[RMDB]
RNA sequence: GGGAACGACUCGAGUAGAGUCGAAAACGUGCCUAUUUAAACGGCGAUUGGGUGAACUGCACAGUGUCUCGCUUAAAUACAAGUCUAAGGCCAGGAGGCGCCUUUGUCAUAGUAAUUGCUUGCAGAGCUACUUCAUGCUGUUCGCAGCAUGAAGUAGAAAAGAAACAACAACAACAAC
Reactivity to DMS in 0.01 (KOAc 150mM, MgCl2 10mM, bicine 150mM(pH8.5), 24C), signal-to-noise 3, nucleotides 027 to 126: c140g030u000g010c000c020u000a150u010u000u010a070a060a160c140g000g010c040g000a060u000u000g000g000g010u000g000a080a080c050u000g000c060a060c110a050g000u000g000u000c030u000c070g010c050u010u000a010a050a100u010a070c130a090a060g000u000c050u000a050a070g010g000c030c070a160g020g010a110g020g000c130g000c030c040u000u000u000g010u000c070a070u010a100g000u000a050a070u010u010g000c030u020u000g010c060a060g000a170g010
Reactivity to 2A3 in 0.01 (KOAc 150mM, MgCl2 10mM, bicine 150mM(pH8.5), 24C), signal-to-noise 3, nucleotides 027 to 126: c030g030u100g000c000c000u040a060u040u260u120a120a130a030c040g040g020c050g050a110u100u130g090g000g020u040g050a080a060c030u060g000c030a040c010a090g030u020g030u120c010u020c040g030c030u050u140a080a080a030u130a080c050a050a070g000u040c030u030a060a030g020g040c030c020a060g110g010a050g040g040c060g010c030c040u020u030u050g030u010c000a020u050a060g030u050a120a090u040u100g020c030u030u020g000c010a040g010a010g090